[RMDB]
RNA sequence: GGGAACGACUCGAGUAGAGUCGAAAAGCUGUGGAAACCCUACACAGAGUAGAGUGCCCGAGUCUUGAGUGUAUGCGGGAACAGGAAAGCUGUGCUAUAAGUGACACUCGAGGUCCAUCUGAAGAAGUGUGAGAACAGAUGGCGUCCUAGAUGGUAAAUGAUGAAAAUUAUUCGUAAUUUUCAUCAUAAAAGAAACAACAACAACAAC
Reactivity to 2A3 in 0.01 (KOAc 150mM, MgCl2 10mM, bicine 150mM(pH8.5), 24C), signal-to-noise 7, nucleotides 027 to 156: g020c020u010g000u030g040g000a090a180a200c020c000c000u040a020c020a000c010a010g050a020g040u150a030g030a050g040u080g040c030c010c020g030a180g300u030c030u040u040g020a040g010u030g010u030a170u180g040c020g010g040g020a030a020c010a020g050g080a130a100a030g150c010u010g010u020g040c010u070a050u030a300a100g020u040g040a010c010a000c020u020c000g000a000g000g000u000c010c010a010u010c010u030g050a090a050g080a160a070g160u120g050u120g150a050g030a060a010c000a010g000a010u010g010g000c000g010u020c000c010u060a110g010a180u120g070g010u100a150a140
Reactivity to DMS in 0.01 (KOAc 150mM, MgCl2 10mM, bicine 150mM(pH8.5), 24C), signal-to-noise 4, nucleotides 027 to 156: g010c020u000g030u010g010g010a160a080a100c040c010c010u000a100c010a090c060a210g010a280g020u010a080g010a100g030u000g000c020c010c010g010a100g010u010c010u000u000g010a120g020u000g030u000a040u010g020c030g050g000g000a110a040c030a030g020g000a100a110a220g010c020u010g020u010g000c060u000a080u000a080a160g010u000g000a070c010a050c020u000c020g020a040g000g010u010c000c000a020u000c020u010g010a120a130g010a090a160g030u000g010u010g010a170g000a140a180c030a050g010a050u000g010g000c070g010u000c040c010u000a100g020a110u000g010g000u000a100a120